About this RNA:
An RNA of 207 nucleotides, treated with 2A3 and read out base by base. For 2A3 the reverse transcriptase was SuperScript II with manganese. Values cover nucleotides 27 to 156. The reactions ran in a buffer of 150 mM KOAc, 10 mM MgCl2 and 150 mM bicine (pH 8.5), at 24 C. Source: RMDB library M2RFPK, as collected in RNAgym.

[RMDB]
RNA sequence: GGGAACGACUCGAGUAGAGUCGAAAAUAAGCAGCUCGUUAGGUGAGGCGGCUACACGAACAUAGGCCACUGACCCCGAACGUCGAGAGACGCCCCGGGUCAGGACAGCUCUUCCCGGCUUAAGGGUAAAAUCACAACGUCUUCGGACGUUGUGAAAACACUGUAUCCUCUUCGGAGGAUACAGUGUAAAAGAAACAACAACAACAAC
Reactivity to 2A3 in 0.01 (KOAc 150mM, MgCl2 10mM, bicine 150mM(pH8.5), 24C), signal-to-noise 1, nucleotides 027 to 156: u150a070a060g040c040a000g010c020u060c050g080u150u180a120g000g060u060g090a050g040g030c050g000g000c070u070a030c050a010c070g090a100a000c020a100u100a100g090g000c030c020a040c010u010g000a010c010c000c050c000g020a070a030c000g000u020c010g020a030g000a050g020a240c010g080c000c030c010c000g010g000g000u010c000a010g020g050a010c030a010g010c010u020c030u090u010c030c000c000g000g020c000u100u050a090a090g050g000g060u070a100a130a070a120u030c020a000c000a000a000c000g000u010c000u020u070c210g060g000a000c030g000u000u000g000u000g010a000a000a000